Source: RMDB libraries RFM100 and RFMREP, as collected in RNAgym. An RNA of 177 nucleotides, treated with DMS and read out base by base. DMS adducts were read by reverse transcription with MarathonRT. Conditions: 150 mM KOAc, 10 mM MgCl2 and 150 mM bicine (pH 8.5), 24 C.

RNA sequence: GGGAACGACUCGAGUAGAGUCGAAAAAUGAGUGGUGGUGCUAUAAGUAGUAGCCAGUCGUAGUUGGGAUUGACAUAUGUAAUUAUGUCAUGAACGUGGAAUUCCUAGUAGUUGGUAGUCACUAACGCGCACUAUGUUCGUUCGCGAACAUAGUGCGAAAAGAAACAACAACAACAAC
Reactivity to DMS in 0.01 (KOAc 150mM, MgCl2 10mM, bicine 150mM(pH8.5), 24C), signal-to-noise 1, nucleotides 027 to 126: a010u000g000a050g000u000g000g030u010g000g040u000g000c050u000a000u010a090a200g060u010a060g000u000a280g000c020c020a010g000u000c030g010u000a110g000u000u000g020g000g020a080u000u030g000a000c030a000u000a000u000g020u010a100a090u010u000a020u000g000u000c030a020u000g000a300a060c100g020u000g020g000a120a140u000u000c010c010u010a050g000u000a080g000u000u010g000g000u010a070g000u000c180a020c030u030a000a100c200g000